Chemical mapping of a 207-nucleotide RNA with 2A3. It was measured as part of the RMDB library OK3TST.
[RMDB]
RNA sequence: GGGAACGACUCGAGUAGAGUCGAAAAGAAGGCUCUCUGCACUCGGCGGUUCUGGCUGUAGGCCACCUCGCCGCCCAGCUUCACCCUGAAAGAGAGUUCAACAGAGUCAGUAGCCAGGGCCGACGCUUGUAUCUGAUUAAUCACGUCGCCUGCCUCCACUUGGCGUCUUAUUCGUAAGACGCCAAGUAAAAGAAACAACAACAACAAC
Reactivity to 2A3 in 0.01 (KOAc 150mM, MgCl2 10mM, bicine 150mM(pH8.5), 24C), signal-to-noise 1, nucleotides 027 to 156: g100a000a130g030g000c000u000c000u000c000u010g030c050a010c020u020c030g010g030c030g000g040u090u110c020u090g000g010c070u160g090u260a170g140g140c000c040a050c030c010u140c070g040c000c000g010c000c000c000a000g000c000u030u050c010a090c020c040c000u040g030a000a090a030g030a000g010a000g030u070u060c000a000a010c060a140g040a070g100u040c040a010g000u140a000g110c050c000a010g000g000g020c220c030g000a010c000g000c140u110u250g070u170a100u150c100u040g120a090u080u270a060a040u100c010a030c030g010u000c000g000c000c000u010g070c000c000u000c000c000